[RMDB]
RNA sequence: GGGAACGACUCGAGUAGAGUCGAAAAAUUGGUUCGCCAAUUAUCCAGGGGUCAGAGUUGUGUCGAUGAAAUUCUUUGAUCUUACUGAAGCCUCCACGGUAAGGGAGAAUAACCGACGAAUCUGACGGAGGCACCCGAACGGGCUCUUCGGAGCCAAGUUUAGUUUACUUUUCGAAGUAAACUAAACAAAAGAAACAACAACAACAAC
Reactivity to 2A3 in 0.01 (KOAc 150mM, MgCl2 10mM, bicine 150mM(pH8.5), 24C), signal-to-noise 5, nucleotides 027 to 156: a000u030u020g010g040u040u060c140g060c060c010a020a010u030u040a050u130c040c030a070g050g010g030g040u050c020a020g030a100g100u300u300g070u160g000u110c010g030a080u140g130a250a180a160u080u000c020u300u240u040g030a030u020c000u000u000a000c010u010g030a140a030g000c000c010u000c000c000a000c010g000g000u000a000a000g000g020g000a020g010a000a010u050a060a050c060c000g000a010c010g020a060a270u050c020u030g020a050c010g000g000a000g010g000c000a010c010c010c000g020a080a040c180g120g010g000c000u000c000u090u110c240g100g010a000g000c010c000a030a000
Reactivity to DMS in 0.01 (KOAc 150mM, MgCl2 10mM, bicine 150mM(pH8.5), 24C), signal-to-noise 1, nucleotides 027 to 156: a050u000u010g000g040u000u000c280g050c020c000a090a070u000u000a090u000c040c030a120g010g000g000g030u000c060a140g010a150g000u010u010g050u010g060u000c000g020a100u010g010a100a180a140u000u010c010u000u010u000g010a060u000c020u010u000a010c050u000g000a070a070g000c000c000u010c000c030a300c050g000g010u000a010a040g010g010g010a030g040a050a030u000a140a030c040c000g000a090c030g000a110a180u000c050u000g000a050c020g060g010a040g050g040c010a140c000c050c050g040a070a100c170g020g010g040c020u000c000u000u010c230g070g000a040g040c000c010a010a170